The record gives the reactivity of an RNA of 177 nucleotides to DMS and 2A3. Reactivities are given for positions 27 through 126. For DMS the reverse transcriptase was MarathonRT. The DMS profile rests on 4,238 reads.

RNA sequence: GGGAACGACUCGAGUAGAGUCGAAAACUUGUGAAAUUUUAUGUUUUUCCUGAAAAGUCAAAAUCUUUAGCUUUCAUUUCGUCCCAAAAAAUUGAAAAUCGGUCGAACGGUUCAAAAGUUAUGUAUAGAUAUACUACCUAUUCGUAGGUAGUAUAUCAAAAGAAACAACAACAACAAC
Reactivity to DMS in 0.01 (KOAc 150mM, MgCl2 10mM, bicine 150mM(pH8.5), 24C), signal-to-noise 4, nucleotides 027 to 126: c090u000u010g010u000g010a060a070a080u010u020u000u010a050u010g000u000u000u000u000u010c020c010u000g010a080a090a100a100g020u000c070a020a060a100a050u000c040u000u000u010a080g020c120u000u000u000c010a050u000u000u010c100g010u010c000c000c010a000a050a080a030a120a090u010u010g000a100a040a060a060u010c030g010g000u010c240g000a090a100c070g000g020u000u000c050a020a060a070a050g000u010u000a050u000g000u010a080u000a150
Reactivity to 2A3 in 0.01 (KOAc 150mM, MgCl2 10mM, bicine 150mM(pH8.5), 24C), signal-to-noise 2, nucleotides 027 to 126: c000u020u050g020u040g110a010a050a140u180u180u080u050a070u110g000u030u050u000u000u000c010c000u010g050a120a010a000a030g070u060c040a040a030a090a100u010c070u040u090u110a020g000c010u000u050u010c000a040u010u090u110c030g030u070c020c000c000a000a030a000a000a030a190u070u050g030a030a010a020a030u040c000g000g040u020c030g090a060a020c010g090g000u090u050c050a060a090a080a010g030u100u120a080u110g080u040a120u140a210